[RMDB]
RNA sequence: GGGAACGACUCGAGUAGAGUCGAAAAUUCUCGGGAGCUUCAGUUGUUUCCACCGGGUAGUAGCCGAAGCGACAGCGCAAAGGGGGCGAGGGGUGGUCCUGCGGGCGCGAGGAAGGACACCCGAAGACCCAAAGAAUUAGUUCGCUAAUUCUUUGGGAAAAGAAACAACAACAACAAC
Reactivity to DMS in 0.01 (KOAc 150mM, MgCl2 10mM, bicine 150mM(pH8.5), 24C), signal-to-noise 3, nucleotides 027 to 126: u000u010c010u000c000g020g040g010a160g010c080u000u010c150a090g010u000u010g010u000u000u000c000c050a120c120c060g000g010g010u000a040g010u000a100g020c020c020g000a060a090g000c060g030a060c120a100g020c060g020c070a030a110a120g010g020g020g000g000c080g010a060g000g000g010g010u000g000g010u000c040c020u000g000c050g010g000g020c060g020c050g000a090g020g010a080a040g000g000a110c070a040c010c010c000g000a050a070g010a220
Reactivity to 2A3 in 0.01 (KOAc 150mM, MgCl2 10mM, bicine 150mM(pH8.5), 24C), signal-to-noise 2, nucleotides 027 to 126: u010u000c000u010c000g000g030g030a050g010c040u190u160c080a040g010u030u020g030u000u060u000c010c070a060c060c070g040g030g010u030a080g040u030a020g100c030c010g010a060a010g000c020g050a090c040a060g090c030g020c030a080a130a080g090g010g000g010g020c010g020a110g020g000g000g020u040g010g070u010c010c020u060g000c030g040g030g000c000g000c030g000a040g060g000a020a020g020g000a010c020a020c020c010c010g020a020a020g030a040